[RMDB]
RNA sequence: GGGAACGACUCGAGUAGAGUCGAAAAAUAAAGCGUAAUCGCAUCCCAGUAGCAAAGAGCAGCGUAAAGGCGAAAGCCGAACUCAAGAUCGCAUCGGGCAAAGAUGCGAUCGUAGCCACGCAAAAAACGGGAUAGUAUAGUUCGCUAUACUAUCCCGAAAAGAAACAACAACAACAAC
Reactivity to 2A3 in 0.01 (KOAc 150mM, MgCl2 10mM, bicine 150mM(pH8.5), 24C), signal-to-noise 3, nucleotides 027 to 126: a000u110a010a080a010g020c020g030u090a050a150u190c070g010c000a020u010c040c000c010a010g120u110a010g000c070a070a160a070g080a040g050c090a040g010c020g050u110a090a040a090g010g000c010g040a050a010a000g000c010c020g030a040a010c050u070c050a070a070g000a000u000c000g000c000a000u000c000g100g040g070c120a110a060a030g030a010u000g000c000g000a000u000c000g010u000a000g000c020c030a010c050g010c030a060a050a030a000a010a060
Reactivity to DMS in 0.01 (KOAc 150mM, MgCl2 10mM, bicine 150mM(pH8.5), 24C), signal-to-noise 3, nucleotides 027 to 126: a110u020a070a070a120g020c020g020u030a120a120u010c050g040c000a150u000c010c010c020a170g020u000a060g000c110a040a090a080g000a070g010c050a070g020c070g010u000a050a090a120g000g010c000g010a110a070a150g010c000c000g010a100a080c080u000c070a110a160g000a020u000c000g020c000a010u000c010g010g000g020c250a120a100a140g020a000u000g010c000g000a000u000c000g000u000a050g020c080c080a030c050g000c070a010a060a040a040a030a070